[RMDB]
RNA sequence: GGGAACGACUCGAGUAGAGUCGAAAAAGCGGUGUCGACGGCGAUGUUGGAGACCGCAACGGUGCGUCGAAGCAGCGUGGGGACCGGUGGCCGAGGCAGACCGCACACGUCAGCGCGUCGCGGCCCGGCUCGAGGUUACGUUCGCGUGACCUCGAGCAAAAGAAACAACAACAACAAC
Reactivity to 2A3 in 0.01 (KOAc 150mM, MgCl2 10mM, bicine 150mM(pH8.5), 24C), signal-to-noise 6, nucleotides 027 to 126: a000g050c050g000g000u080g040u080c020g010a070c030g030g120c100g070a120u200g040u040u080g110g010a080g050a060c010c020g020c020a020a020c040g050g000u120g030c020g030u060c060g070a120a030g020c050a010g030c010g050u060g000g020g010g030a060c010c060g000g030u050g060g020c010c010g010a110g040g050c020a020g040a060c010c020g040c020a020c000a010c010g180u170c090a050g010c010g000c020g020u020c020g000c010g030g030c020c000c000g010
Reactivity to DMS in 0.01 (KOAc 150mM, MgCl2 10mM, bicine 150mM(pH8.5), 24C), signal-to-noise 3, nucleotides 027 to 126: a040g010c010g010g040u000g000u000c020g010a040c030g000g010c110g010a070u040g020u010u000g000g030a090g000a080c080c020g020c030a030a030c100g000g020u020g020c000g040u000c090g030a140a090g000c050a090g000c000g040u000g010g000g010g000a110c110c000g000g010u060g000g000c000c020g000a120g030g000c050a120g000a090c040c010g000c030a040c100a080c090g020u000c090a090g000c060g000c130g020u000c010g000c020g000g010c010c000c010g010
An RNA of 177 nucleotides, treated with 2A3 and DMS and read out base by base. Conditions: 150 mM KOAc, 10 mM MgCl2 and 150 mM bicine (pH 8.5), 24 C. Values cover nucleotides 27 to 126. The data come from the RNA Mapping Database (RMDB), library OK1LIB. For 2A3, 7,400 sequencing reads were counted.